[RMDB]
RNA sequence: GGGAACGACUCGAGUAGAGUCGAAAAUCAACUAAUGAAUUUUAUACUAAAGGGAUGACACCAGUUCAAGACAAGGAGGAAGGAAAGAAUUCAUCUAAGUGUUACAUACAGGUCACUGGCAUGACUUGCGCUUCCUGUGUAGCAAACAUUGAACGGACAAGUCGUAUUGUUUCGACAAUACGACUUGAAAAGAAACAACAACAACAAC
Reactivity to 2A3 in 0.01 (KOAc 150mM, MgCl2 10mM, bicine 150mM(pH8.5), 24C), signal-to-noise 3, nucleotides 027 to 156: u050c000a010a040c020u170a070a100u130g050a020a020u160u100u160u180a160u130a090c080u150a030a020a100g040g000g020a040u090g050a040c010a020c070c010a010g040u060u090c060a070a020g010a080c040a050a020g050g030a010g020g010a010a020g010g050a090a050a020g050a020a050u080u060c030a020u020c080u060a110a050g040u000g020u080u050a040c030a030u110a060c020a030g000g040u030c020a010c070u020g000g030c080a030u030g040a100c000u060u050g020c060g010c060u030u030c000c000u030g000u000g000u010a030g030c040a050a020a030c020a080u060u100g030a020a020c060g030g000a000
Reactivity to DMS in 0.01 (KOAc 150mM, MgCl2 10mM, bicine 150mM(pH8.5), 24C), signal-to-noise 2, nucleotides 027 to 156: u000c040a120a180c130u020a080a050u000g010a110a090u000u000u000u000a130u010a190c090u000a020a040a160g000g010g020a100u000g020a160c010a080c040c020a110g010u000u000c080a060a050g000a090c040a110a110g030g010a050g050g000a070a090g050g000a060a110a200g010a070a100u000u000c040a030u010c060u000a090a090g020u010g040u000u000a030c020a060u000a040c050a050g020g020u000c020a000c050u000g050g020c100a220u000g010a010c030u000u000g000c030g000c180u000u000c040c000u010g000u000g020u020a040g000c010a000a070a060c050a070u000u000g000a080a070c010g000g010a210